[RMDB]
RNA sequence: GGGAACGACUCGAGUAGAGUCGAAAACUGUAGGCCGUGGGCUGCUGGUGGUGGCCAAGGAAUGAACAACUACCAGAUUUACGAUGAGGUGGGUAAAGGGCGGUUUAGUAUCGUCUACAAAGGGCGACGGAGUUUUAGGAUUCGUCCUAAAACUCCGAAAAGAAACAACAACAACAAC
Reactivity to DMS in 0.01 (KOAc 150mM, MgCl2 10mM, bicine 150mM(pH8.5), 24C), signal-to-noise 1, nucleotides 027 to 126: c100u020g000u010a030g010g000c100c030g010u000g020g020g040c060u000g030c030u000g010g000u000g010g030u000g000g000c060c030a060a030g030g050a140a180u000g010a070a060c030a140a020c030u000a050c010c000a070g000a120u050u000u030a140c100g010a140u000g000a090g000g000u000g000g000g010u020a030a060a040g040g000g030c060g030g020u010u010u010a000g000u000a110u000c010g010u000c010u000a140c140a070a080a110g000g000g000c110g000a060
The data come from the RNA Mapping Database (RMDB), library OK2TST. This 177-nucleotide RNA was probed chemically with DMS. Conditions: 150 mM KOAc, 10 mM MgCl2 and 150 mM bicine (pH 8.5), 24 C.